RNA sequence: GGGAACGACUCGAGUAGAGUCGAAAAGUUCGAACUCAAGAAGAGAAGAUUUUCGAGGAAAUACUCCCAAGAAGUUCCCGGAGGGAUCCAAGAGACGGAUGACUUUCCCCCAUUGGUUGGGAAAAGUGGACGCGUAUGUUCGCAUACGCGAAAAGAAACAACAACAACAAC
Reactivity to 2A3 in 0.01 (KOAc 150mM, MgCl2 10mM, bicine 150mM(pH8.5), 24C), signal-to-noise 5, nucleotides 027 to 129: g010u050u070c030g010a120a030c010u010c060a140a060g110a120a010g000a090g010a110a030g010a050u020u020u050u060c010g020a020g000g050a030a100a010u070a050c030u020c010c010c010a030a040g040a020a000g010u030u020c000c020c000g000g000a030g020g020g000a010u020c030c020a050a010g040a000g030a090c040g000g020a020u020g010a010c000u030u020u050c020c000c000c000c020a070u040u170g040g000u050u050g010g000g000a000a010a000a010g080u060g020g050a020
Reactivity to DMS in 0.01 (KOAc 150mM, MgCl2 10mM, bicine 150mM(pH8.5), 24C), signal-to-noise 6, nucleotides 027 to 129: g050u050u000c090g040a160a150c070u020c070a090a180g030a130a060g010a080g000a140a100g030a100u030u020u020u000c000g020a020g000g000a080a090a160u000a080c000u010c010c070c100a120a060g020a060a250g000u020u020c100c020c030g000g000a070g030g000g020a060u020c060c050a030a090g030a010g000a110c130g020g050a080u050g020a000c050u000u000u000c030c000c010c120c160a160u040u030g050g020u020u000g030g010g030a030a010a030a040g020u000g000g030a180